[RMDB]
This 177-nucleotide RNA was probed chemically with 2A3 and DMS. DMS adducts were read by reverse transcription with MarathonRT. Source: RMDB library OK2TST, as collected in RNAgym. For 2A3 the reverse transcriptase was SuperScript II with manganese. The reactions ran in a buffer of 150 mM KOAc, 10 mM MgCl2 and 150 mM bicine (pH 8.5), at 24 C. The 2A3 profile rests on 4,175 reads.
RNA sequence: GGGAACGACUCGAGUAGAGUCGAAAAGACGCCUUGCUACUGCCGACGCGGUGCGAAUCGUCACCGCCCACGGAUCGCUCGGACAGCAGUGGCACACAGUCAUCGUCGCAGGUGUUCAAGAAGGAACCCAUGUUAGUGCUUUCGAGCACUAACAUGGAAAAGAAACAACAACAACAAC
Reactivity to 2A3 in 0.01 (KOAc 150mM, MgCl2 10mM, bicine 150mM(pH8.5), 24C), signal-to-noise 3, nucleotides 027 to 126: g050a000c040g070c010c000u030u140g010c000u010a020c010u040g030c020c040g070a070c090g000c000g080g000u050g030c010g040a060a240u160c060g110u080c050a020c060c020g030c000c030c010a090c020g060g030a070u090c050g000c050u020c030g030g050a050c010a020g000c010a010g020u000g000g020c020a010c000a000c010a010g070u050c020a040u060c040g100u050c040g000c080a060g050g000u040g050u090u070c040a060a020g090a040a050g230g000a030a030c010
Reactivity to DMS in 0.01 (KOAc 150mM, MgCl2 10mM, bicine 150mM(pH8.5), 24C), signal-to-noise 3, nucleotides 027 to 126: g020a050c090g000c060c030u020u000g010c010u010a040c000u000g010c000c030g010a170c230g040c080g010g010u010g010c050g000a070a070u010c090g000u000c070a080c080c050g010c040c050c060a090c050g010g010a050u000c040g000c030u000c030g000g000a130c150a080g010c010a030g010u010g000g000c010a070c290a060c070a070g000u010c060a040u000c030g000u000c050g000c080a060g000g020u000g000u010u000c060a070a100g000a110a110g000g010a070a090c100